[RMDB]
The record gives the reactivity of an RNA of 177 nucleotides to 2A3 and DMS. Conditions: 150 mM KOAc, 10 mM MgCl2 and 150 mM bicine (pH 8.5), 24 C. The data come from the RNA Mapping Database (RMDB), library OK2TST. For DMS the reverse transcriptase was MarathonRT. 2A3 adducts were read by reverse transcription with SuperScript II with manganese.
RNA sequence: GGGAACGACUCGAGUAGAGUCGAAAAUUUGCCCUAUUGUGGUGGUGAAUAAAAUUGAUAAGCCUGCCGCUGAACCGGACAGAGUGGUGGAUGAAGUUUUUGACUUGUUCGUAGCGAUGGGGGCUAGAGGAUAGUAUAGGUUCGCCUAUACUAUCCUAAAAGAAACAACAACAACAAC
Reactivity to 2A3 in 0.01 (KOAc 150mM, MgCl2 10mM, bicine 150mM(pH8.5), 24C), signal-to-noise 4, nucleotides 027 to 126: u030u020u110g000c010c000c010u060a120u060u190g070u060g050g010u050g020g030u040g050a070a040u170a100a110a050a100u130u150g050a060u070a140a020g030c010c010u060g060c050c000g000c020u020g010a050a030c060c000g020g010a030c010a020g120a020g120u070g060g070u060g060g000a060u050g130a090a100g060u030u000u050u140u200g060a020c000u020u040g020u040u060c040g030u050a030g010c010g030a070u090g020g010g000g040g000c000u020a040g030
Reactivity to DMS in 0.01 (KOAc 150mM, MgCl2 10mM, bicine 150mM(pH8.5), 24C), signal-to-noise 9, nucleotides 027 to 126: u010u000u000g010c000c010c010u010a150u010u010g020u010g010g040u000g010g020u000g010a090a060u000a060a070a100a140u010u010g000a120u000a100a210g010c030c010u000g010c030c010g010c030u000g010a120a090c150c050g000g000a080c060a060g000a090g010u000g010g020u000g010g000a070u000g010a070a090g010u000u000u000u000u000g000a060c050u000u000g010u000u000c050g020u000a150g010c030g010a100u000g010g000g000g010g010c080u000a060g010